[RMDB]
About this RNA: The record gives the reactivity of an RNA of 177 nucleotides to 2A3 and DMS. For 2A3 the reverse transcriptase was SuperScript II with manganese. It was measured as part of the RMDB library RFMREP. For DMS, 1,997 sequencing reads were counted. The RNA was probed in 150 mM KOAc, 10 mM MgCl2 and 150 mM bicine (pH 8.5) at 24 C.
RNA sequence: GGGAACGACUCGAGUAGAGUCGAAAAAGAUAGUGCUUCUCUUAUGAGAAGGGCGUCGUGAACACAGUUAAGUGGCUCGUCUGUAGCUCCCGGAGGUGAGUACACCUCUACGUAUAUGGGGCGAUGAUCCCUCAUACAAGUUCGCUUGUAUGAGGGAAAAAGAAACAACAACAACAAC
Reactivity to 2A3 in 0.01 (KOAc 150mM, MgCl2 10mM, bicine 150mM(pH8.5), 24C), signal-to-noise 1, nucleotides 027 to 126: a000g070a000u260a080g020u050g080c010u020u020c000u000c000u100u230a270u300g000a020g020a060a050g050g020g000c020g040u010c010g110u100g090a070a030c010a000c010a150g050u180u300a160a080g020u040g060g000c020u000c070g060u030c030u100g090u080a000g030c000u040c020c040c010g010g020a020g000g010u000g030a200g150u080a070c000a010c020c000u000c010u050a040c080g010u040a070u000a040u200g020g010g030g000c020g000a000u040g030a020
Reactivity to DMS in 0.01 (KOAc 150mM, MgCl2 10mM, bicine 150mM(pH8.5), 24C), signal-to-noise 2, nucleotides 027 to 126: a100g000a060u010a030g010u000g000c000u000u000c000u000c010u000u000a160u030g000a040g010a020a020g010g010g010c010g010u010c050g000u000g000a110a090c050a030c030a110g000u010u000a070a140g020u010g010g000c050u000c020g000u000c030u010g010u000a140g020c070u000c030c030c070g030g010a000g010g020u030g020a270g020u010a130c020a010c010c000u020c000u010a020c200g010u010a080u010a050u020g020g020g010g010c030g000a040u000g000a160